[RMDB]
RNA sequence: GGGAACGACUCGAGUAGAGUCGAAAAGAUAUGGAAAUAGAACUACAGCAUACGAGCCAUCGAUCUCGGAAACGAGGGAGGCUCCUAUGCUGCUAUUUCCUAAGUCAAACUCUAGUUCGCUAGAGAAUCCACAUAACACGUUCGCGUGUUAUGUGGAAAAAGAAACAACAACAACAAC
Reactivity to DMS in 0.01 (KOAc 150mM, MgCl2 10mM, bicine 150mM(pH8.5), 24C), signal-to-noise 1, nucleotides 027 to 126: g020a000u000a300u000g010g000a000a000a010u000a000g050a080a050c110u000a300c000a000g000c010a010u000a010c300g000a020g010c000c000a300u000c100g010a050u000c000u000c030g010g010a050a100a110c000g000a010g030g020g000a060g060g010c000u000c000c030u000a000u000g020c000u010g030c000u000a010u000u000u010c020c000u020a050a150g010u000c010a070a150a170c000u000c000u000a000g000u000u030c260g030c000u000a000g000a060g010a120a100
Reactivity to 2A3 in 0.01 (KOAc 150mM, MgCl2 10mM, bicine 150mM(pH8.5), 24C), signal-to-noise 1, nucleotides 027 to 126: g000a030u090a000u080g000g000a000a000a010u040a040g030a100a030c100u240a060c300a020g010c020a000u010a000c010g010a010g010c010c000a190u300c110g070a090u020c000u000c010g040g030a040a070a060c010g000a010g020g000g000a010g000g030c010u000c000c010u010a010u020g000c000u000g000c000u000a010u000u020u000c000c000u010a050a030g000u000c020a040a060a240c000u020c000u000a010g040u090u060c300g000c240u000a010g000a010g070a070a090
This 177-nucleotide RNA was probed chemically with DMS and 2A3. For DMS, 729 sequencing reads were counted. Conditions: 150 mM KOAc, 10 mM MgCl2 and 150 mM bicine (pH 8.5), 24 C. The data come from the RNA Mapping Database (RMDB), library TTRDEL.